[RMDB]
RNA sequence: GGGAACGACUCGAGUAGAGUCGAAAAGCUGGCCUCUUGCGAAAGACACGCAGUGCAAGAAACGUUAGCAAGACACGAAGAGCAGUGUAACAACGUGACACUAACUUUGGAAAGUCGCAGGGCAGCAAUUAAUAUAUAUAUUCGUAUAUAUAUUAAUAAAAGAAACAACAACAACAAC
Reactivity to 2A3 in 0.01 (KOAc 150mM, MgCl2 10mM, bicine 150mM(pH8.5), 24C), signal-to-noise 3, nucleotides 027 to 126: g000c020u080g130g300c010c030u140c060u110u080g000c000g050a020a040a020g140a050c040a000c090g170c060a040g020u000g080c040a080a030g020a100a150a010c020g000u030u030a030g040c070a080a010g060a030c000a000c040g090a100a100g070a030g240c180a080g020u000g010u060a080a030c010a020a030c040g020u030g050a000c000a000c080u140a190a050c000u060u130u070g080g000a110a050a080g030u020c000g000c010a000g000g010g010c010a000g000c000a000
Reactivity to DMS in 0.01 (KOAc 150mM, MgCl2 10mM, bicine 150mM(pH8.5), 24C), signal-to-noise 2, nucleotides 027 to 126: g010c000u000g020g020c010c010u020c100u050u000g020c000g020a050a110a080g030a300c140a070c160g010c150a030g010u020g040c080a090a100g010a030a090a020c050g020u010u000a080g000c090a120a090g020a030c020a040c020g000a080a110g010a110g040c100a130g040u000g010u010a070a110c030a100a100c040g000u010g000a100c040a020c050u000a050a130c050u000u010u040g010g010a110a150a100g020u040c010g010c050a050g000g000g030c010a020g000c020a050